Source: RMDB library OK3TST, as collected in RNAgym. Chemical mapping of a 207-nucleotide RNA with 2A3 and DMS.

[RMDB]
RNA sequence: GGGAACGACUCGAGUAGAGUCGAAAAGGGCGAAGGUGCCCAGCCAGUGCCCGGGCAUGCCCGGAAGACAGCGGUUCAAGACAGAAAAGAUGGCAGCUCACCUCCUCUGUUGGAGAAGCAGACCGUUACCAAAGACGUCACAGAUAAGCCACUAGACGUAGCAGUAGUUAUUCGUAACUACUGCUACAAAAGAAACAACAACAACAAC
Reactivity to 2A3 in 0.01 (KOAc 150mM, MgCl2 10mM, bicine 150mM(pH8.5), 24C), signal-to-noise 3, nucleotides 027 to 156: g030g010g000c070g070a110a070g150g030u100g020c000c000c010a000g020c000c000a040g050u070g040c000c040c010g000g010g000c090a100u120g020c010c000c010g030g000a030a000g060a010c010a010g030c010g050g030u030u090c030a080a000g030a090c040a050g140a110a080a030a010g040a050u100g010g030c020a020g010c010u040c060a080c030c000u000c000c010u140c080u190g250u210u170g020g010a050g020a020a000g000c000a000g020a010c010c030g040u020u050a050c060c040a150a130a000g050a050c060g000u020c010a020c020a070g080a030u110a090a030g010c000c040a040c020u050a030g010a070c060
Reactivity to DMS in 0.01 (KOAc 150mM, MgCl2 10mM, bicine 150mM(pH8.5), 24C), signal-to-noise 2, nucleotides 027 to 156: g040g000g050c000g010a070a140g020g050u010g000c010c050c000a070g000c010c020a250g000u010g010c040c010c060g020g000g030c040a160u020g020c000c010c030g000g020a020a060g030a150c000a070g020c020g000g020u000u000c030a090a160g010a080c070a140g030a020a060a060a060g020a030u010g010g000c010a240g000c110u010c010a090c080c030u010c010c020u000c060u010g000u000u010g010g040a140g020a060a070g000c050a070g020a300c000c050g050u000u000a220c050c010a050a090a100g010a080c040g000u010c010a040c060a210g020a160u000a090a060g020c010c010a110c070u000a110g000a250c050

The DMS profile rests on 1,900 reads. Reactivities are given for positions 27 through 156. For 2A3 the reverse transcriptase was SuperScript II with manganese. For DMS the reverse transcriptase was MarathonRT.